[RMDB]
RNA sequence: GGGAACGACUCGAGUAGAGUCGAAAAACGCAUCAUACGUGAUGCGAGAACUACAGUUCCGCUCCUCUAGCACACAGAGGUCAAUUGGGUGCGACCCCCCCCUCUCCCGUGGGUCAACGGGAACAAAAAAAGACCCUUUAGUUCGCUAAAGGGUCAAGUCCACUUUAUACUUCGGUAUAAAGUGGACAAAAGAAACAACAACAACAAC
Reactivity to 2A3 in 0.01 (KOAc 150mM, MgCl2 10mM, bicine 150mM(pH8.5), 24C), signal-to-noise 2, nucleotides 027 to 156: a000c000g000c000a000u000c020a040u070a130c250g060u080g000a010u030g000c070g000a050g020a020a030c100u200a050c100a080g010u010u030c000c030g000c070u030c020c000u000c040u050a060g020c050a020c020a010c010a030g030a020g040g030u080c070a060a040u150u140g050g000g000u020g000c040g180a240c000c000c000c000c000c000c000c000u030c030u010c000c000c000g000u010g000g010g000u050c050a000a000c000g000g000g000a000a010c000a000a000a000a000a000a000a030g000a000c000c000c020u000u000u000a010g010u050u040c120g010c220u020a000a000a000g000g000g000u010c000a000a000